[RMDB]
RNA sequence: GGGAACGACUCGAGUAGAGUCGAAAAGAAAGGAUGGCGGCUGCCGACACGCCUGUGAACCGCAGGCAUGCCUUGCCACCGCGGAGGAUGGGAAAGCAUGCCGGCCACCGCUGCGGAUGGGAAAGCAUGCCGCUAACUGAAGUCCAGAGGAUGGGAAUAAGAGUAGGUAAUUCGUUACCUACUCUUAAAAAGAAACAACAACAACAAC
Reactivity to DMS in 0.01 (KOAc 150mM, MgCl2 10mM, bicine 150mM(pH8.5), 24C), signal-to-noise 3, nucleotides 027 to 156: g020a140a090a130g010g020a090u010g000g030c000g010g010c000u000g020c030c010g010a240c010a050c040g010c020c000u000g020u010g010a090a110c070c040g000c040a090g010g010c000a020u000g010c010c010u000u000g020c040c010a070c010c000g000c050g000g010a190g020g010a090u010g000g000g000a090a050a090g010c030a050u000g010c000c030g000g010c010c020a100c030c010g000c040u010g020c050g030g010a120u000g020g010g010a070a100a040g000c010a030u000g020c000c010g010c030u010a040a110c050u010g010a080a090g010u000c030c020a090g010a120g000g000a100u000g010g010g000a100a250
Reactivity to 2A3 in 0.01 (KOAc 150mM, MgCl2 10mM, bicine 150mM(pH8.5), 24C), signal-to-noise 4, nucleotides 027 to 156: g050a040a090a010g040g030a080u130g010g000c000g000g000c020u030g030c020c020g020a010c020a010c040g020c010c040u020g020u030g030a120a110c050c060g010c030a020g000g010c010a010u020g000c000c010u050u080g050c000c000a000c000c000g020c070g040g130a080g030g030a140u040g020g000g050a030a070a020g030c020a020u120g040c020c000g000g010c000c000a030c020c020g040c060u050g000c000g000g130a180u070g100g010g010a110a050a010g010c020a030u210g000c030c000g000c000u000a020a000c000u010g020a050a000g040u020c000c030a030g020a020g150g040a030u120g070g000g040a040a020